Structure probing data (2A3 and DMS) for a 177-nucleotide construct. It was measured as part of the RMDB library OK2TST. For 2A3, 2,299 sequencing reads were counted. The RNA was probed in 150 mM KOAc, 10 mM MgCl2 and 150 mM bicine (pH 8.5) at 24 C. The DMS profile rests on 1,719 reads.
RNA sequence: GGGAACGACUCGAGUAGAGUCGAAAAAUGACCGUCCAGAUUUCCGCAGGUACCGUCCUCAGGCCAUAGACGGUGCACCUACACCCCAACUGCGGGACUCCAUAGCCAAACUGGAUGCCGCCACUGGGUAUUUACCGUACUUCGGUACGGUAAAUACAAAAGAAACAACAACAACAAC
Reactivity to 2A3 in 0.01 (KOAc 150mM, MgCl2 10mM, bicine 150mM(pH8.5), 24C), signal-to-noise 2, nucleotides 027 to 126: a000u070g040a040c040c000g010u070c030c010a030g020a100u050u060u000c010c010g000c000a020g020g040u020a030c010c000g000u020c010c000u080c090a090g030g030c060c020a110u100a040g010a000c000g000g020u010g000c010a050c020c020u180a090c010a140c040c000c000c010a040a030c010u020g010c000g000g000g000a000c020u000c010c020a110u110a070g010c010c030a030a040a030c030u000g020g000a020u050g060c020c020g030c010c010a060c060u050g090g100
Reactivity to DMS in 0.01 (KOAc 150mM, MgCl2 10mM, bicine 150mM(pH8.5), 24C), signal-to-noise 3, nucleotides 027 to 126: a080u010g000a060c060c030g010u010c030c040a080g000a140u000u010u000c030c010g010c070a030g020g010u000a040c030c000g010u000c000c020u000c120a110g000g040c020c040a070u010a100g000a010c030g020g000u000g000c050a090c170c090u000a150c160a180c040c020c010c040a110a300c070u010g010c000g010g000g000a060c040u010c020c050a040u010a100g000c100c060a030a110a170c070u010g000g010a040u000g000c050c020g000c020c050a100c090u000g010g000